[RMDB]
RNA sequence: GGGAACGACUCGAGUAGAGUCGAAAAGUGCAGCAGUUCGCUGCUGCACAAAAGGCAUGGUAUCAUUGCUUCGAAGCCAAACUAGAAACUAGAAAGCAGUGAAAAGACACUUCUUCGGAAGUGUCAAGGGAAGAAUAAACUUCGGUUUAUUCUUCCCAAAAGAAACAACAACAACAAC
Reactivity to 2A3 in 0.01 (KOAc 150mM, MgCl2 10mM, bicine 150mM(pH8.5), 24C), signal-to-noise 3, nucleotides 027 to 126: g020u000g000c010a010g010c000a000g020u050u130c160g070c130u010g010c000u000g000c000a000c000a000a110a000a000g040g020c040a040u170g110g040u180a070u200c000a010u000u030g000c000u020u000c020g050a050a010g010c040c020a060a080a020c040u050a060g140a120a130a020c010u010a060g050a090a100a010g010c010a000g020u000g050a040a030a040a040g000a010c000a000c000u010u020c000u030u070c230g080g020a000a000g000u000g000u000c000a000a000
Reactivity to DMS in 0.01 (KOAc 150mM, MgCl2 10mM, bicine 150mM(pH8.5), 24C), signal-to-noise 3, nucleotides 027 to 126: g000u000g010c000a030g020c000a010g050u010u010c180g020c010u000g010c000u000g000c000a000c000a020a020a120a090g000g010c050a090u000g020g000u000a130u000c020a000u010u000g010c020u010u000c020g020a140a050g010c030c040a030a070a150c170u020a100g000a150a060a060c050u000a260g000a100a050a040g010c000a000g010u010g000a050a090a100a110g000a010c000a010c000u000u000c000u000u010c110g030g000a010a010g010u000g000u000c000a020a080
This 177-nucleotide RNA was probed chemically with 2A3 and DMS. For DMS the reverse transcriptase was MarathonRT. The RNA was probed in 150 mM KOAc, 10 mM MgCl2 and 150 mM bicine (pH 8.5) at 24 C. High 2A3 reactivity points to a flexible backbone, as in loops and unpaired stretches. Values cover nucleotides 27 to 126.